An RNA of 177 nucleotides, treated with 2A3 and DMS and read out base by base. DMS adducts were read by reverse transcription with MarathonRT. The reactions ran in a buffer of 150 mM KOAc, 10 mM MgCl2 and 150 mM bicine (pH 8.5), at 24 C. 2A3 adducts were read by reverse transcription with SuperScript II with manganese.
RNA sequence: GGGAACGACUCGAGUAGAGUCGAAAAAUACUGCAUGUUAUAGGUAGAUAAUGUUAAAUGAUUAAUCAAUAUAAUUGCUGUCUUGAUCAUGUUCAGUGGACAAGCAUGAGAAAAUGCAUUAUUUAUACUUAGGGAAUAUGUUCGCAUAUUCCCUAAGAAAAGAAACAACAACAACAAC
Reactivity to 2A3 in 0.01 (KOAc 150mM, MgCl2 10mM, bicine 150mM(pH8.5), 24C), signal-to-noise 6, nucleotides 027 to 126: a000u070a010c010u010g010c010a020u030g050u110u170a090u050a090g020g030u020a030g030a180u090a100a040u050g020u070u180a110a210a090u120g020a040u080u260a180a060u140c010a010a040u080a020u040a240a110u060u040g010c010u010g020u020c020u030u050g040a050u030c010a040u040g100u210u090c030a050g040u050g110g030a030c040a100a040g000c000a010u020g010a010g120a090a100a020a020u020g000c010a000u010u060a040u020u140u040a090u040a080
Reactivity to DMS in 0.01 (KOAc 150mM, MgCl2 10mM, bicine 150mM(pH8.5), 24C), signal-to-noise 6, nucleotides 027 to 126: a050u000a040c050u010g000c020a020u000g010u000u000a090u010a040g010g010u000a060g010a060u000a030a030u010g000u010u010a070a090a110u010g000a070u010u000a110a090u010c010a060a090u010a090u000a070a040u000u000g010c020u000g000u000c010u000u000g010a120u000c150a050u000g010u000u000c070a060g040u010g010g010a060c110a070a060g020c000a010u000g000a100g000a060a060a080a030u000g000c010a050u000u000a030u000u000u000a060u000a180